[RMDB]
RNA sequence: GGGAACGACUCGAGUAGAGUCGAAAAGAUAUGGAUCGGCAAGGGAGCUCAGCACUCGGAAACGAGUGGAGCUUUGAUCUUGGCCGAUCCUAAGUCAAAGGCAUACGGCGUUCGCGCCGUAUGCCAAGUAUUAACAUACCUUCGGGUAUGUUAAUACAAAAGAAACAACAACAACAAC
Reactivity to DMS in 0.01 (KOAc 150mM, MgCl2 10mM, bicine 150mM(pH8.5), 24C), signal-to-noise 4, nucleotides 027 to 126: g000a030u000a300u010g010g000a000u000c000g010g010c000a030a010g010g010g000a030g010c000u000c010a170g020c020a010c000u000c000g000g000a080a100a160c010g010a010g080u000g010g000a010g000c000u000u010u020g000a080u010c000u010u000g020g020c000c000g010a010u000c000c000u000a010a090g000u000c020a110a150a180g000g010c000a000u010a000c010g000g000c000g020u010u010c270g020c000g010c000c010g010u000a000u000g010c000c000a000a020
Reactivity to 2A3 in 0.01 (KOAc 150mM, MgCl2 10mM, bicine 150mM(pH8.5), 24C), signal-to-noise 4, nucleotides 027 to 126: g040a000u070a030u170g000g010a010u000c000g030g000c010a010a000g050g070g070a030g020c000u010c030a200g300c020a040c000u010c000g000g030a050a070a030c010g000a000g010u000g020g010a000g000c000u260u110u190g060a060u040c000u010u040g290g040c000c000g000a000u000c000c000u000a010a000g000u010c030a130a090a080g010g010c020a000u020a010c020g010g010c050g040u060u160c300g020c010g000c150c010g000u010a000u000g010c010c000a000a000